[RMDB]
RNA sequence: GGGAACGACUCGAGUAGAGUCGAAAACAAUUAACGGCACCUCGUAGGUGGUGCCGAACCUGCGUGAACUACUAACACGCUACGAGCAGUCUGGUAUGACUGCAAACAAUUAGUAGAUUGGAUGAAAGAUCACGAGGACGUUCGCGUCCUCGUGAUCAAAAGAAACAACAACAACAAC
Reactivity to 2A3 in 0.01 (KOAc 150mM, MgCl2 10mM, bicine 150mM(pH8.5), 24C), signal-to-noise 1, nucleotides 027 to 126: c000a000a190u270u120a140a090c000g000g000c000a000c000c000u140c000g030u250a030g030g020u060g000g000u000g000c050c000g040a000a000c000c060u000g000c130g000u000g080a140a000c000u000a000c000u000a000a000c040a000c000g010c000u060a000c130g000a010g030c000a010g000u000c000u150g250g080u210a160u290g000a000c000u000g000c000a000a000a000c080a000a000u000u000a000g000u060a010g140a160u120u240g300g040a110u060g050a030a000a030
Chemical mapping of a 177-nucleotide RNA with 2A3. For 2A3 the reverse transcriptase was SuperScript II with manganese. High 2A3 reactivity points to a flexible backbone, as in loops and unpaired stretches. Values cover nucleotides 27 to 126. The 2A3 profile rests on 419 reads.